[RMDB]
This 177-nucleotide RNA was probed chemically with DMS and 2A3. In probing experiments dimethyl sulfate is read out at A N1 and C N3, which are open when not base-paired. Reactivities are given for positions 27 through 126. The data come from the RNA Mapping Database (RMDB), library OK1LIB. The 2A3 profile rests on 26,182 reads. The DMS profile rests on 16,508 reads.

RNA sequence: GGGAACGACUCGAGUAGAGUCGAAAAGCGCGGUUGCCCACGAGUGACCCGUAGCCAAUCGCGGCUCCCCUUACUGGAGCUUUACUGAAAGCAGGUCAGCGACAGCAUCGUGUAGUGCCGAAGCAGCCGAGCAGUUUAUAUUCGUAUAAACUGCUCGAAAAGAAACAACAACAACAAC
Reactivity to DMS in 0.01 (KOAc 150mM, MgCl2 10mM, bicine 150mM(pH8.5), 24C), signal-to-noise 7, nucleotides 027 to 126: g010c040g010c020g010g010u000u000g010c270c030c050a050c070g000a130g000u000g000a050c050c010c010g020u010a050g000c250c010a040a040u010c040g020c060g020g000c020u010c000c000c050c120u020u020a070c090u020g000g030a090g010c020u000u010u020a110c100u010g010a100a080a110g010c020a050g000g000u000c050a050g000c070g000a110c100a090g000c070a140u010c030g000u020g010u020a070g020u000g000c010c010g010a080a120g000c080a080g020c090
Reactivity to 2A3 in 0.01 (KOAc 150mM, MgCl2 10mM, bicine 150mM(pH8.5), 24C), signal-to-noise 9, nucleotides 027 to 126: g040c030g000c030g010g030u050u050g020c010c020c010a050c030g040a090g070u120g060a070c010c010c020g020u020a010g020c020c010a010a040u060c040g000c000g090g010c020u040c010c000c000c000u060u150a080c050u090g020g020a040g010c000u070u080u080a110c060u120g110a060a050a030g050c020a020g010g040u040c030a010g010c010g040a030c030a040g030c010a040u040c040g020u030g050u120a070g040u030g040c010c010g020a070a020g020c050a010g040c040